[RMDB]
RNA sequence: GGGAACGACUCGAGUAGAGUCGAAAAGAUAUGGAUCCAUUGGGACAUGCUGAUGACUCGGAAACGAGGCCCAGCAACAGCCCACUGGAUCCUAAGUCAAAUCCAUUCCGCUUCGGCGGAAUGGAAACACUCUAUCGUCCUUCGGGACGAUAGAGUGAAAAGAAACAACAACAACAAC
Reactivity to 2A3 in 0.01 (KOAc 150mM, MgCl2 10mM, bicine 150mM(pH8.5), 24C), signal-to-noise 1, nucleotides 027 to 126: g000a000u000a010u070g000g000a000u000c010c000a000u010u020g000g030g000a070c210a300u290g000c000u020g000a300u060g040a140c010u010c000g000g030a010a020a020c020g000a010g040g000c010c020c000a000g000c010a040a140c130a140g040c020c000c000a000c010u000g000g000a000u000c000c000u000a010a000g000u000c030a020a030a220u000c010c000a000u010u000c000c010g030c010u010u080c240g160g000c000g000g040a000a000u000g020g070a020a000a000
Reactivity to DMS in 0.01 (KOAc 150mM, MgCl2 10mM, bicine 150mM(pH8.5), 24C), signal-to-noise 2, nucleotides 027 to 126: g000a020u000a110u010g000g000a000u010c010c000a040u000u000g020g020g010a070c120a130u000g010c010u000g000a130u000g000a040c000u030c020g010g000a030a040a100c010g000a000g000g000c070c220c000a000g000c010a040a100c290a120g000c000c000c010a010c010u000g000g010a010u000c010c000u020a010a030g010u000c020a130a150a080u000c000c000a000u000u010c010c010g000c000u000u020c160g040g030c000g000g000a030a000u000g000g010a030a040a130
An RNA of 177 nucleotides, treated with 2A3 and DMS and read out base by base. Values are in units of 0.01, from 0 to 300, in steps of 10. The data come from the RNA Mapping Database (RMDB), library TTRDEL. For 2A3, 2,602 sequencing reads were counted. For DMS, 1,353 sequencing reads were counted. Values cover nucleotides 27 to 126.